[RMDB]
An RNA of 177 nucleotides, treated with 2A3 and DMS and read out base by base.
RNA sequence: GGGAACGACUCGAGUAGAGUCGAAAAAGGAAGGGAGACCCUGAGUGUUUGGACCCCGCCUGUGCUCAGCACAGAAUGGAGCUCAGUAAGGGCAGGUCGUGGGCUCCUUCUUCUCCCUUUCAGCAACCCUUUAACUUUAAUUCGUUAAAGUUAAAGGAAAAGAAACAACAACAACAAC
Reactivity to 2A3 in 0.01 (KOAc 150mM, MgCl2 10mM, bicine 150mM(pH8.5), 24C), signal-to-noise 5, nucleotides 027 to 126: a000g020g010a010a000g000g000g010a010g030a030c030c010c020u030g040a060g040u080g060u070u230u110g040g010a040c000c010c010c000g050c010c020u040g010u030g040c010u020c060a020g020c120a030c010a070g180a050a040u260g040g020a050g010c000u020c040a030g040u100a050a070g050g030g000c040a010g020g040u130c080g080u190g000g030g000c040u010c010c000u000u000c000u020u000c000u010c010c000c000u020u010u000c020a020g010c000a020a080c000
Reactivity to DMS in 0.01 (KOAc 150mM, MgCl2 10mM, bicine 150mM(pH8.5), 24C), signal-to-noise 8, nucleotides 027 to 126: a090g010g000a020a010g000g010g000a030g010a060c300c090c020u000g000a070g020u000g010u000u000u010g000g010a150c040c010c000c040g010c040c000u000g020u000g010c000u000c080a060g020c090a080c140a080g000a060a100u010g020g000a060g010c010u000c060a100g010u010a120a100g010g010g010c020a040g000g000u010c050g030u010g010g010g000c070u000c010c010u000u000c010u000u000c010u000c000c000c010u000u000u000c020a120g010c160a090a100c100
The RNA was probed in 150 mM KOAc, 10 mM MgCl2 and 150 mM bicine (pH 8.5) at 24 C. For 2A3, 12,151 sequencing reads were counted. Source: RMDB library OK2TST, as collected in RNAgym.